The data come from the RNA Mapping Database (RMDB), library OK2TRN. Chemical mapping of a 177-nucleotide RNA with DMS. In probing experiments dimethyl sulfate is read out at A N1 and C N3, which are open when not base-paired.

RNA sequence: GGGAACGACUCGAGUAGAGUCGAAAAUUAGCGUUAAUGCCGGACCUUCUGGCAUGAUCAGCAUUAACUUUUGAAUCAAUUCAUCAGAUCCAUUUCCUGCAAUAAUUUGUUCAGGCGAUAAUCCGUACUUAGCGGACGUAUUCGUACGUCCGCUAAGAAAAGAAACAACAACAACAAC
Reactivity to DMS in 0.01 (KOAc 150mM, MgCl2 10mM, bicine 150mM(pH8.5), 24C), signal-to-noise 1, nucleotides 027 to 126: u050u000a020g010c050g010u010u020a070a010u000g010c010c010g050g010a190c230c150u010u010c010u000g010g020c010a030u010g010a030u030c070a150g010c040a070u020u010a020a040c020u010u020u000u000g020a050a040u000c090a070a050u020u010c070a050u000c130a060g000a070u000c040c030a040u000u000u000c000c000u000g000c240a030a070u030a060a070u020u000u010g010u000u000c020a030g030g010c110g000a050u010a060a100u010c030c030g000u020a100